RNA sequence: GGGAACGACUCGAGUAGAGUCGAAAAGUAAAGAAGAAAACGUGCGCAAGAAAAGAAUGGUGGUAUAAAGUGCCGAGAAUAACUAAUGGACGGCAGAGCGCACGAACCACCAAAGAACAGAAAAAAAUCAUAGUAAUUACUUCGGUAAUUACUAUGAAAAAGAAACAACAACAACAAC
Reactivity to 2A3 in 0.01 (KOAc 150mM, MgCl2 10mM, bicine 150mM(pH8.5), 24C), signal-to-noise 1, nucleotides 027 to 126: g060u100a060a080a090g100a090a020g030a040a120a000a010c020g000u010g000c030g000c010a080a000g090a180a280a030a010g030a010a080u080g000g020u000g010g000u010a070u070a170a060a020g070u030g030c020c000g070a050g130a120a110u120a070a020c050u040a020a180u130g060g070a030c000g010g010c000a000g000a000g110c010g000c000a000c000g010a010a000c000c010a000c010c000a030a030a030g020a070a030c060a030g160a070a080a000a040a000a020a010
Reactivity to DMS in 0.01 (KOAc 150mM, MgCl2 10mM, bicine 150mM(pH8.5), 24C), signal-to-noise 2, nucleotides 027 to 126: g010u010a050a080a050g020a140a150g000a120a080a090a080c000g010u000g050c030g040c010a080a150g020a080a070a130a100g000a100a100u000g010g020u010g010g030u010a080u000a040a020a070g010u000g010c010c030g020a090g010a020a110u010a070a120c110u010a120a060u000g000g020a080c010g040g000c000a070g000a080g010c010g010c010a000c040g000a040a070c010c010a010c000c050a110a030a130g000a020a040c180a170g010a000a000a010a070a050a120a100